[RMDB]
RNA sequence: GGGAACGACUCGAGUAGAGUCGAAAAAAGUUUGCGUGCGCCCCGGCCUUGACACGUAAAUAACCUCAGAAAGCGUCUUCUCGCCAGUGCGUUAAACCAAUGUUUGUAGUUAUGACUAAUGCGAACCCCGUAUAAACCCAUUCGUGGGUUUAUACGGAAAAGAAACAACAACAACAAC
Reactivity to DMS in 0.01 (KOAc 150mM, MgCl2 10mM, bicine 150mM(pH8.5), 24C), signal-to-noise 2, nucleotides 027 to 126: a040a110g010u000u000u000g010c030g020u010g010c080g020c050c030c030c080g020g000c010c020u000u010g040a130c070a040c060g000u000a040a050a050u020a070a120c060c030u000c080a080g000a050a060a080g020c050g000u000c030u000u000c040u000c040g010c020c060a090g010u010g000c050g000u010u010a050a070a090c060c060a050a090u010g020u000u010u000g000u010a070g000u000u000a070u000g020a130c090u000a020a070u000g000c030g010a030a050c070c150

Structure probing data (DMS) for a 177-nucleotide construct. The RNA was probed in 150 mM KOAc, 10 mM MgCl2 and 150 mM bicine (pH 8.5) at 24 C. For DMS the reverse transcriptase was MarathonRT. DMS (dimethyl sulfate) methylates the pairing face of unpaired adenines and cytosines.